[RMDB]
RNA sequence: GGGAACGACUCGAGUAGAGUCGAAAAGUGAGCACCGCCGCGAGCAUUGCGAUCCAUCGCGGGUCAUCGAGAAACUGGGCCAGCAAUGUGGCGAGCCGGUCGGAAAGGUCAAAGUGCCAUCGGGGUGUCUUCACCUGCCCUUCGGGGCAGGUGAAGAAAAAGAAACAACAACAACAAC
Reactivity to DMS in 0.01 (KOAc 150mM, MgCl2 10mM, bicine 150mM(pH8.5), 24C), signal-to-noise 1, nucleotides 027 to 126: g000u010g030a080g000c060a090c040c000g000c030c040g040c190g020a080g020c010a080u030u010g000c230g000a120u010c000c050a200u140c130g010c050g000g000g040u040c040a080u020c000g050a180g000a150a040a120c070u000g010g000g040c000c040a090g030c070a110a070u000g000u000g020g000c080g030a120g030c060c020g000g000u000c020g000g050a140a040a200g050g020u000c040a100a130a070g000u000g010c000c010a010u050c000g000g000g000g000u000g080
Reactivity to 2A3 in 0.01 (KOAc 150mM, MgCl2 10mM, bicine 150mM(pH8.5), 24C), signal-to-noise 1, nucleotides 027 to 126: g030u020g020a040g000c020a020c010c000g090c010c000g030c060g010a030g040c000a060u050u230g010c050g010a020u020c000c020a070u040c070g000c050g100g040g000u000c000a010u040c020g080a050g030a130a060a050c100u150g000g120g000c040c040a000g010c000a000a120u050g000u030g020g020c020g000a010g000c000c050g010g070u030c010g050g020a100a110a110g000g000u040c100a000a000a100g100u100g050c020c090a040u100c080g060g000g000g000u010g010